This 177-nucleotide RNA was probed chemically with 2A3 and DMS.
For 2A3, 4,945 sequencing reads were counted.
For 2A3 the reverse transcriptase was SuperScript II with manganese.
Values are in units of 0.01, from 0 to 300, in steps of 10.
Conditions: 150 mM KOAc, 10 mM MgCl2 and 150 mM bicine (pH 8.5), 24 C.
RNA sequence: GGGAACGACUCGAGUAGAGUCGAAAACUCAGAUGCAACGCAAACAAGUUGAACGGCCUGUUUGGAAACGAGUUCCAAACAAGGAAGAAAAUGUGACAGUCUGCUUUGGACCCAGAGACGCUUUGCGGGAGGAAUUAUCAUUCGUGAUAAUUCCUCCAAAAGAAACAACAACAACAAC
Reactivity to 2A3 in 0.01 (KOAc 150mM, MgCl2 10mM, bicine 150mM(pH8.5), 24C), signal-to-noise 4, nucleotides 027 to 126: c010u000c000a020g010a100u170g050c030a020a040c040g010c030a010a070a070c030a140a150g020u020u040g060a080a010c040g050g000c000c010u000g000u020u000u000g020g000a020a040a030c110g080a250g210u050u000c000c000a010a010a020c030a060a110g020g000a030a040g060a020a070a010a030u150g020u030g040a010c030a010g020u000c010u020g010c000u070u090u100g050g020a050c010c000c020a020g020a010g000a030c020g020c110u080u070u090g020c030g050
Reactivity to DMS in 0.01 (KOAc 150mM, MgCl2 10mM, bicine 150mM(pH8.5), 24C), signal-to-noise 5, nucleotides 027 to 126: c020u000c020a120g020a120u000g010c060a050a090c070g020c050a040a050a070c090a080a130g010u000u000g010a140a160c080g000g000c010c000u000g010u000u000u020g000g000a020a050a180c290g020a200g000u000u000c000c000a000a020a020c000a030a060g010g010a060a050g000a090a050a060a090u000g010u010g000a070c060a110g000u000c030u000g010c040u010u010u010g020g010a070c030c020c040a070g000a130g000a110c090g010c080u000u010u010g020c150g030